The record gives the reactivity of an RNA of 177 nucleotides to DMS and 2A3. For DMS, 1,953 sequencing reads were counted. Source: RMDB library TTRDES, as collected in RNAgym. Reactivities are given for positions 27 through 126. The RNA was probed in 150 mM KOAc, 10 mM MgCl2 and 150 mM bicine (pH 8.5) at 24 C.
[RMDB]
RNA sequence: GGGAACGACUCGAGUAGAGUCGAAAAGAUAUGGAUGGUGAGUAGCAUCGAUCAUGUCACUCGGAAACGAGUGCAUGGGAGCUACCACCAUCCUAAGUCAAAAGGUCAACACUUCGGUGUUGACCAACAACUGUUGUUCCUUCGGGAACAACAGUUGAAAAGAAACAACAACAACAAC
Reactivity to DMS in 0.01 (KOAc 150mM, MgCl2 10mM, bicine 150mM(pH8.5), 24C), signal-to-noise 2, nucleotides 027 to 126: g000a000u000a060u020g000g000a030u000g000g010u010g020a110g020u030a000g010c000a300u000c220g000a010u000c000a000u000g020u010c010a010c010u000c010g000g010a010a010a040c010g030a020g020u000g000c000a000u000g010g010g000a010g030c000u000a010c020c000a000c010c000a010u000c000c000u000a010a060g000u000c000a080a100a090a150g010g020u000c000a000a000c000a010c000u000u010c250g010g010u000g000u010u020g000a010c000c020a020a030
Reactivity to 2A3 in 0.01 (KOAc 150mM, MgCl2 10mM, bicine 150mM(pH8.5), 24C), signal-to-noise 1, nucleotides 027 to 126: g000a000u030a010u060g010g000a000u000g010g010u020g000a130g010u000a000g040c020a050u300c080g050a010u030c010a000u000g270u220c010a000c010u000c010g000g000a000a020a020c010g000a000g020u000g000c010a020u000g020g010g000a040g000c010u000a000c000c000a010c000c000a010u010c000c000u000a000a010g010u010c000a000a060a000a290g010g000u000c010a010a010c000a000c040u090u190c300g120g020u010g000u000u000g000a000c000c000a000a000